[RMDB]
An RNA of 207 nucleotides, treated with 2A3 and DMS and read out base by base. Reactivities are rounded to 0.1 and cut off at 0 and 3.
RNA sequence: GGGAACGACUCGAGUAGAGUCGAAAAUCUUUGAGAUGCUGGGCGCUAUGGUCGUCCUCCUCCGGCUGACCUCCUUCUCAGCUGCUGACCGGCGCCGCACAGGCGGCAUCUCAGCUUCGUGUGCAAAAAAAGAAUGGUCGGUUCGCCGACCAUUCAAGGAUUAAAUUGUGUUCGCACAAUUUAAUCCAAAAGAAACAACAACAACAAC
Reactivity to 2A3 in 0.01 (KOAc 150mM, MgCl2 10mM, bicine 150mM(pH8.5), 24C), signal-to-noise 2, nucleotides 027 to 156: u020c040u030u120u050g000a000g010a020u000g000c010u050g020g010g020c030g000c020u110a170u300g030g020u020c040g040u060c050c020u060c010c000u030c050c030g000g000c000u010g000a060c010c050u170c010c090u260u050c050u000c050a010g000c010u020g000c100u130g020a010c030c010g020g000c000g000c000c000g000c000a040c020a020g130g040c000g000g030c010a000u000c000u000c000a000g000c030u140u170c060g120u100g010u030g080c050a050a070a000a020a020a120a000g000a000a000u000g000g000u010c020g000g040u020u020c080g040c050c000g000a000c000c000a000u000u000c000a000a000
Reactivity to DMS in 0.01 (KOAc 150mM, MgCl2 10mM, bicine 150mM(pH8.5), 24C), signal-to-noise 1, nucleotides 027 to 156: u010c050u000u000u000g030a030g030a010u010g010c000u010g010g020g020c000g020c010u010a060u000g070g010u010c000g000u000c040c010u000c030c020u000c050c010g000g000c010u000g000a010c070c110u010c160c110u000u000c060u010c020a030g020c000u000g010c060u000g020a040c000c010g030g000c040g050c020c000g040c100a090c080a100g000g020c050g000g020c000a010u000c000u000c010a030g000c050u000u000c090g000u000g010u030g020c000a000a000a070a130a010a130a210g020a030a010u010g010g010u010c000g000g000u000u000c300g070c010c000g000a000c000c000a000u000u000c000a070a180